[RMDB]
RNA sequence: GGGAACGACUCGAGUAGAGUCGAAAAGCUCGUCCACUCCGAUCGAGCCACUAGGAGCUAUCGGAACUCUUAGCGGAGUGACCAAAUCUCUCGACUUCAGUUGGACAUCGUGAUAUCGAGGUCCAAAGACGUUUGAUGGGUUCGCCUAUCGAACGUCAAAAGAAACAACAACAACAAC
Reactivity to DMS in 0.01 (KOAc 150mM, MgCl2 10mM, bicine 150mM(pH8.5), 24C), signal-to-noise 9, nucleotides 027 to 126: g010c060u010c060g010u010c060c040a060c030u000c070c030g000a110u020c080g000a080g010c040c050a300c030u000a020g010g000a020g000c050u020a130u030c170g010g040a140a180c010u000c010u000u000a040g000c060g010g010a040g000u000g000a110c050c060a060a070a070u010c050u010c020u000c020g010a100c100u010u020c090a080g010u010u000g000g000a010c000a030u000c010g020u010g000a140u050a050u040c010g010a020g000g010u000c010c000a010a040a060
Reactivity to 2A3 in 0.01 (KOAc 150mM, MgCl2 10mM, bicine 150mM(pH8.5), 24C), signal-to-noise 9, nucleotides 027 to 126: g020c010u020c040g040u050c060c010a030c020u000c010c010g050a110u120c060g040a020g050c020c010a030c010u030a020g030g000a030g010c020u080a100u260c090g070g050a070a050c010u000c000u020u020a010g030c010g010g010a010g010u020g020a030c010c030a020a080a090u050c060u000c000u020c040g070a070c030u090u050c110a120g020u060u020g010g000a000c000a020u010c010g020u070g140a090u020a050u270c010g000a010g000g010u000c000c000a010a000a010
The record gives the reactivity of an RNA of 177 nucleotides to DMS and 2A3. The DMS profile rests on 33,105 reads. 2A3 adducts were read by reverse transcription with SuperScript II with manganese. It was measured as part of the RMDB library OK1LIB. Conditions: 150 mM KOAc, 10 mM MgCl2 and 150 mM bicine (pH 8.5), 24 C. For 2A3, 125,164 sequencing reads were counted.